[RMDB]
About this RNA:
Chemical mapping of a 177-nucleotide RNA with 2A3 and DMS. For DMS, 13,992 sequencing reads were counted. The data come from the RNA Mapping Database (RMDB), library OK1LIB. For DMS the reverse transcriptase was MarathonRT. Values are in units of 0.01, from 0 to 300, in steps of 10.
RNA sequence: GGGAACGACUCGAGUAGAGUCGAAAAUGCUGGUUAGGGAUUGUAGAGAUGCAGUCCCCAGUGUCGCAAAUCGGGCUUCUCUAGAUUGUAUAUGGUUACGUGCGACAGAUACUGGUGAGGCGAAGAAGGGUUAAUAUUACUUCGGUAAUAUUAACCCAAAAGAAACAACAACAACAAC
Reactivity to 2A3 in 0.01 (KOAc 150mM, MgCl2 10mM, bicine 150mM(pH8.5), 24C), signal-to-noise 4, nucleotides 027 to 126: u160g000c000u010g000g100u100u140a090g110g000g030a030u000u000g010u020a030g010a010g030a140u090g000c010a000g000u000c000c000c000c000a010g010u010g000u010c030g020c040a010a010a020u080c010g000g010g000c000u090u000c040u060c060u070a050g040a300u130u140g070u100a110u030a060u210g080g030u040u070a020c030g010u040g000c000g000a000c020a030g100a020u170a050c000u000g030g050u070g060a020g040g050c100g040a090a020g070a060a070
Reactivity to DMS in 0.01 (KOAc 150mM, MgCl2 10mM, bicine 150mM(pH8.5), 24C), signal-to-noise 5, nucleotides 027 to 126: u020g010c000u000g000g020u000u000a130g010g000g010a030u000u000g020u010a030g000a170g010a140u000g000c000a020g000u000c000c000c000c050a040g010u000g020u000c020g010c040a040a060a060u010c050g010g010g020c040u000u000c100u000c040u000a100g020a130u020u040g020u020a080u030a110u030g000g000u000u010a050c080g020u010g000c010g000a010c030a060g010a110u030a040c060u000g000g010u010g000a110g000g000c040g000a060a080g010a110a180